Structure probing data (DMS and 2A3) for a 177-nucleotide construct.
RNA sequence: GGGAACGACUCGAGUAGAGUCGAAAAAAUGCAUCUGCAUACUGCGUAACCUAUCAUAGUUUCUGAAAUGAAUUUAUCAAAAAUGUAGAACUUAAUUUGUGGGUUCUAAAGUGGGCCAUGCACAUAACAUGCUACCAAUAUUCGUAUUGGUAGCAUGAAAAGAAACAACAACAACAAC
Reactivity to DMS in 0.01 (KOAc 150mM, MgCl2 10mM, bicine 150mM(pH8.5), 24C), signal-to-noise 5, nucleotides 027 to 126: a050a050u010g010c010a040u000c080u030g020c020a060u010a090c070u010g000c140g000u010a050a090c020c010u000a040u000c100a070u000a080g010u000u010u000c020u000g000a080a080a100u010g010a060a080u000u000u000a090u000c050a030a040a050a070a060u010g010u000a030g010a030a030c040u000u000a060a130u010u010u000g030u000g000g000g010u000u000c050u000a020a070a070g020u010g000g000g030c030c300a020u010g010c020a030c080a080u010a080a200
Reactivity to 2A3 in 0.01 (KOAc 150mM, MgCl2 10mM, bicine 150mM(pH8.5), 24C), signal-to-noise 4, nucleotides 027 to 126: a000a000u060g020c020a050u050c030u130g000c000a010u030a100c020u050g010c010g050u040a020a030c000c010u050a070u130c020a070u050a070g030u030u110u040c030u040g040a110a060a040u050g040a050a070u110u180u150a150u130c070a050a070a090a040a060u150g050u110a030g000a010a000c000u050u130a090a100u120u070u110g100u090g050g020g000u000u020c020u080a080a090a020g050u050g000g010g030c000c010a030u050g000c030a030c000a050u140a060a020
Annotation
For 2A3, 3,943 sequencing reads were counted. Source: RMDB library OK2TST, as collected in RNAgym. The reactions ran in a buffer of 150 mM KOAc, 10 mM MgCl2 and 150 mM bicine (pH 8.5), at 24 C.